[RMDB]
The record gives the reactivity of an RNA of 207 nucleotides to 2A3. Source: RMDB library M2RFPK, as collected in RNAgym. Values cover nucleotides 27 to 156. The reactions ran in a buffer of 150 mM KOAc, 10 mM MgCl2 and 150 mM bicine (pH 8.5), at 24 C. High 2A3 reactivity points to a flexible backbone, as in loops and unpaired stretches.
RNA sequence: GGGAACGACUCGAGUAGAGUCGAAAAACGAGGUACGCCUCGAAAAUAUGACCGGUGUCAUAGCCUCUAGCACACAGGGGUCGCGUGGGUUCAACUCCCCCCCUUUUCCGAGGGUAUCGGAAACCAAAAAACACAAUUUGGUUCGCCAAAUUGUGAAGAUAGAGGCUGUGUUCGCACAGCCUCUAUCAAAAGAAACAACAACAACAAC
Reactivity to 2A3 in 0.01 (KOAc 150mM, MgCl2 10mM, bicine 150mM(pH8.5), 24C), signal-to-noise 1, nucleotides 027 to 156: a000c000g000a000g020g010u060a010c150g070c000c040u030c030g060a050a020a020a030u180a130u140g000a010c040c080g220g030u180g070u140c020a020u020a040g010c010c000u020c000u030a070g100c070a040c010a000c010a160g020g000g030g000u000c000g000c020g060u060g000g040g000u120u100c040a030a030c050u010c030c000c000c000c000c000c000u000u030u030u040c010c000g000a000g000g000g000u120a020u010c000g000g020a000a000a030c000c000a060a010a100a000a000a000c000a000c000a000a000u010u010u010g000g000u030u040c080g020c070c000a000a010a000u000u010g000u000g000a000a000